Structure probing data (DMS and 2A3) for a 177-nucleotide construct. It was measured as part of the RMDB library OK2TST. For DMS the reverse transcriptase was MarathonRT. 2A3 is a SHAPE reagent: it acylates the 2'-hydroxyl of flexible nucleotides of all four kinds. Reactivities are given for positions 27 through 126. The reactions ran in a buffer of 150 mM KOAc, 10 mM MgCl2 and 150 mM bicine (pH 8.5), at 24 C.

RNA sequence: GGGAACGACUCGAGUAGAGUCGAAAACAUAUUACGACCGCUGACACCUUCAUGCAUUUUGGCGUUGAUAUUCAGUGCGGCAAACAGCGGAUAGAACGGGCUGGUGGAGGCGUGCAUCAUAAAGGCGCGCCCCCUGAAAGUUCGCUUUCAGGGGGCGAAAAGAAACAACAACAACAAC
Reactivity to DMS in 0.01 (KOAc 150mM, MgCl2 10mM, bicine 150mM(pH8.5), 24C), signal-to-noise 2, nucleotides 027 to 126: c050a110u010a080u010u000a110c130g000a130c060c020g020c000u000g000a200c130a090c090c070u010u000c050a050u010g000c040a090u010u000u020u000g030g020c090g020u000u010g010a070u030a070u000u000c040a070g050u030g000c050g030g000c070a060a040a120c030a050g010c020g010g020a050u000a060g020a060a080c070g040g000g000c000u000g010g000u010g020g000a100g020g000c020g000u000g020c050a090u000c150a090u020a030a070a110g030g000c050g040
Reactivity to 2A3 in 0.01 (KOAc 150mM, MgCl2 10mM, bicine 150mM(pH8.5), 24C), signal-to-noise 2, nucleotides 027 to 126: c020a030u300a110u160u100a050c130g050a070c040c050g030c030u020g000a040c000a010c090c050u050u040c030a060u090g070c030a060u040u100u090u260g160g000c060g060u030u100g070a050u030a160u140u100c050a000g030u010g110c060g040g040c100a040a020a000c020a000g060c010g080g020a070u060a030g050a090a010c040g040g000g010c020u090g000g040u020g010g050a060g000g020c050g020u020g060c010a030u040c000a020u170a170a210a070g100g000c020g030